[RMDB]
RNA sequence: GGGAACGACUCGAGUAGAGUCGAAAACGUGAGAGGCCGCGCGUACUCUAUGAGGUACCGACGGCCGCGCGCAGACUGCGCGUGGAUCUGCGCGAUCGGCCCUCUACGAGUGUAUCGGCGCCGUAGCCGUGUUACAGCCUUUCGAGGCUGUAACACGAAAAGAAACAACAACAACAAC
Reactivity to DMS in 0.01 (KOAc 150mM, MgCl2 10mM, bicine 150mM(pH8.5), 24C), signal-to-noise 5, nucleotides 027 to 126: c040g010u020g000a100g000a170g000g020c020c030g030c030g010c080g020u000a020c010u000c010u010a180u000g010a110g000g020u000a070c010c020g000a040c040g020g010c010c010g000c010g020c010g020c000a110g000a150c200u010g010c020g010c020g040u010g000g000a100u000c140u010g010c110g010c040g010a110u000c000g000g020c300c020c000u000c010u000a110c240g000a050g000u000g010u000a110u010c060g010g020c020g010c020c090g010u010a040g000c140
Reactivity to 2A3 in 0.01 (KOAc 150mM, MgCl2 10mM, bicine 150mM(pH8.5), 24C), signal-to-noise 2, nucleotides 027 to 126: c010g030u070g060a180g010a080g100g050c110c050g050c050g020c030g010u010a010c000u000c010u050a140u160g050a040g050g010u090a160c000c000g080a070c000g030g000c040c000g000c000g000c000g000c000a160g050a300c180u170g030c010g020c030g030u060g010g000a150u040c100u210g040c100g030c010g090a090u050c010g000g000c000c020c010u020c000u020a020c080g020a030g030u020g010u040a090u230c040g040g000c030g020c030c020g000u020a010g050c030
Structure probing data (DMS and 2A3) for a 177-nucleotide construct.
For 2A3 the reverse transcriptase was SuperScript II with manganese.
For DMS, 4,716 sequencing reads were counted.
DMS adducts were read by reverse transcription with MarathonRT.